[RMDB]
RNA sequence: GGGAACGACUCGAGUAGAGUCGAAAAUCUGUUUACAAGUUAUCGUUAAGUCCAUGUCUGACUACGAUUCCGUAGACAGAAGCCAGUUUGCGUCAAGUCCGACAUGGACUCUUGGCAGAACUGAUCAGUGCAUACGGGUAUUCGUACCCGUAUGCACAAAAGAAACAACAACAACAAC
Reactivity to DMS in 0.01 (KOAc 150mM, MgCl2 10mM, bicine 150mM(pH8.5), 24C), signal-to-noise 3, nucleotides 027 to 126: u000c000u000g000u000u000u000a060c020a120a060g010u000u000a060u010c090g010u010u020a090a030g010u000c000c060a070u020g000u000c100u000g010a020c020u000a110c050g000a040u010u000c140c110g010u000a030g000a020c020a030g000a050a150g010c130c040a090g000u000u010u000g030c070g010u010c040a060a020g000u000c000c040g000a080c140a030u000g010g010a000c010u000c040u010u000g010g010c040a260g020a020a020c030u000g010a100u000c100a090
Reactivity to 2A3 in 0.01 (KOAc 150mM, MgCl2 10mM, bicine 150mM(pH8.5), 24C), signal-to-noise 2, nucleotides 027 to 126: u010c040u040g010u010u090u030a050c010a090a140g000u100u060a140u190c030g000u080u150a100a020g010u030c010c020a100u120g080u000c150u080g010a010c000u030a030c060g040a060u060u000c090c020g030u000a000g000a000c030a000g050a040a010g080c050c000a020g000u000u000u040g040c010g020u010c010a040a010g000u000c000c000g070a240c240a230u140g000g000a000c030u010c020u010u000g020g000c020a010g020a010a000c030u040g000a090u140c070a050

Conditions: 150 mM KOAc, 10 mM MgCl2 and 150 mM bicine (pH 8.5), 24 C. Chemical mapping of a 177-nucleotide RNA with DMS and 2A3.